[RMDB]
RNA sequence: GGGAACGACUCGAGUAGAGUCGAAAAGGAGUGAUCAAAGAGGGGCCCGUUGACGAGCUCGAAGAAGCGAUGGGUGAUGCUGGGGAGCAGGGCCGGGUCCACCUGGUGUCGCAGGAGAGACGCUCGCCUUAGGUUCUCGAUUCGUCGAGAACCUAAGAAAAGAAACAACAACAACAAC
Reactivity to DMS in 0.01 (KOAc 150mM, MgCl2 10mM, bicine 150mM(pH8.5), 24C), signal-to-noise 3, nucleotides 027 to 126: g000g000a070g020u000g010a120u030c050a090a060a110g000a130g000g030g000g010c020c000c040g020u020u010g010a080c070g020a150g030c000u030c020g010a130a100g000a190a080g000c010g010a090u020g010g030g000u020g000a090u080g020c050u000g020g020g010g030a030g000c040a030g000g000g030c070c020g010g000g030u000c020c030a130c020c010u030g000g020u020g010u030c080g000c020a010g000g030a100g000a250g020a050c120g000c000u000c030g020c160
Reactivity to 2A3 in 0.01 (KOAc 150mM, MgCl2 10mM, bicine 150mM(pH8.5), 24C), signal-to-noise 3, nucleotides 027 to 126: g080g010a030g020u100g060a190u130c070a050a100a020g140a100g010g000g000g050c030c000c000g040u030u060g070a090c020g030a020g010c000u000c020g140a170a100g060a070a010g090c030g060a070u110g050g090g020u070g040a080u150g000c110u070g030g030g010g040a030g020c070a010g010g030g000c000c000g000g000g000u020c010c010a040c020c030u000g030g010u140g050u100c080g020c030a000g000g030a050g000a000g000a030c030g000c030u000c000g050c000
About this RNA
Chemical mapping of a 177-nucleotide RNA with DMS and 2A3. The 2A3 profile rests on 2,234 reads. For DMS the reverse transcriptase was MarathonRT.